[RMDB]
RNA sequence: GGGAACGACUCGAGUAGAGUCGAAAAAGCCGGCAGCCGGUUGCUCUUGUGAUGGGUGGAUGGAGCCAAACUGCCCCCUGCGGGGGCGGAGGGCAACCUUUUUCCCCAACUGGUGAAUCAACGGUUGGUGUAGGUUAGCUUUCGAGCUAACCUACACAAAAGAAACAACAACAACAAC
Reactivity to DMS in 0.01 (KOAc 150mM, MgCl2 10mM, bicine 150mM(pH8.5), 24C), signal-to-noise 1, nucleotides 027 to 126: a120g020c020c000g070g020c070a090g030c160c000g130g020u000u010g000c030u000c050u000u000g020u010g040a080u020g000g060g020u000g010g000a050u000g000g000a300g050c020c020a050a040a110c000u010g020c000c000c000c000c000u060g050c290g010g010g020g010g100c000g000g020a000g000g040g000c010a060a050c000c000u000u000u000u000u000c110c000c000c110a040a060c030u000g000g000u010g000a210a210u110c070a140a070c020g030g000u000u030g000
Reactivity to 2A3 in 0.01 (KOAc 150mM, MgCl2 10mM, bicine 150mM(pH8.5), 24C), signal-to-noise 2, nucleotides 027 to 126: a020g050c030c000g010g030c020a020g000c000c020g050g000u000u020g010c000u020c000u050u140g030u050g040a140u090g020g030g020u080g040g010a050u080g030g020a030g030c010c000a140a200a100c020u070g000c000c000c000c000c040u130g100c300g000g000g000g000g000c000g000g000a020g020g010g000c000a010a220c000c000u000u020u010u000u000c040c010c000c000a030a060c020u080g000g030u080g120a040a070u110c040a050a060c000g050g000u020u040g060